[RMDB]
RNA sequence: GGGAACGACUCGAGUAGAGUCGAAAAGAUAUGGAAUCUCUAAGGGAGAAUGUGUGUCGGAAACGACAUAGAUUCGACGAUCUUACAUGAGAUUCCUAAGUCAAACGAAUGCGUUCGCGCAUUCGAAGGCACACUACAAGUUCGCUUGUAGUGUGCCAAAAGAAACAACAACAACAAC
Reactivity to DMS in 0.01 (KOAc 150mM, MgCl2 10mM, bicine 150mM(pH8.5), 24C), signal-to-noise 1, nucleotides 027 to 126: g000a070u000a300u000g000g000a000a020u000c010u000c000u000a020a030g000g000g000a040g010a030a000u000g010u000g020u020g050u000c020g010g000a070a040a170c010g000a000c000a000u000a020g000a050u000u000c000g000a230c210g040a020u010c030u000u000a010c300a150u010g010a010g020a010u000u000c020c020u020a000a080g010u010c040a110a050a300c050g000a010a010u010g000c040g030u000u030c300g020c010g010c000a020u000u020c000g030a110a150
Reactivity to 2A3 in 0.01 (KOAc 150mM, MgCl2 10mM, bicine 150mM(pH8.5), 24C), signal-to-noise 2, nucleotides 027 to 126: g010a000u050a040u110g000g000a000a000u000c030u000c010u030a030a030g050g030g000a080g060a010a000u120g110u000g010u000g010u280c000g000g050a030a030a040c010g020a000c020a000u000a000g200a020u020u030c040g170a190c030g070a120u010c000u040u100a110c150a250u290g000a020g000a050u010u000c000c020u010a040a000g070u030c060a180a030a050c030g010a000a000u000g010c060g070u080u080c300g030c040g000c090a000u010u000c010g000a080a040
Source information
This 177-nucleotide RNA was probed chemically with DMS and 2A3. The RNA was probed in 150 mM KOAc, 10 mM MgCl2 and 150 mM bicine (pH 8.5) at 24 C. For DMS the reverse transcriptase was MarathonRT. For 2A3 the reverse transcriptase was SuperScript II with manganese.